[RMDB]
RNA sequence: GGGAACGACUCGAGUAGAGUCGAAAACAGCAUUUUUUACGCGUCGUGGUCGAAAUUGGAACAUCACACGUGAAAGGGAUGUCACGUAUAUGCGCGUGUGCACGUUAAUCAUCCGCGCUUCGAUCAGGAGGUAUGGCGGGUUCGCCCGCCAUACCUCAAAAGAAACAACAACAACAAC
Reactivity to 2A3 in 0.01 (KOAc 150mM, MgCl2 10mM, bicine 150mM(pH8.5), 24C), signal-to-noise 1, nucleotides 027 to 126: c000a000g000c010a150u000u000u000u120u140u140a030c010g000c000g060u000c000g040u000g000g000u000c070g150a000a140a250u300u300g130g000a060a070c100a100u000c140a100c030a000c070g040u070g100a040a040a040g040g010g000a000u140g010u010c000a040c290g110u000a000u080a000u240g000c030g000c000g000u170g030u030g010c040a000c080g150u180u210a060a000u070c060a000u000c010c000g000c000g000c000u100u040c110g030a130u210c010a030g000
Chemical mapping of a 177-nucleotide RNA with 2A3. The 2A3 profile rests on 287 reads. Source: RMDB library OK1LIB, as collected in RNAgym.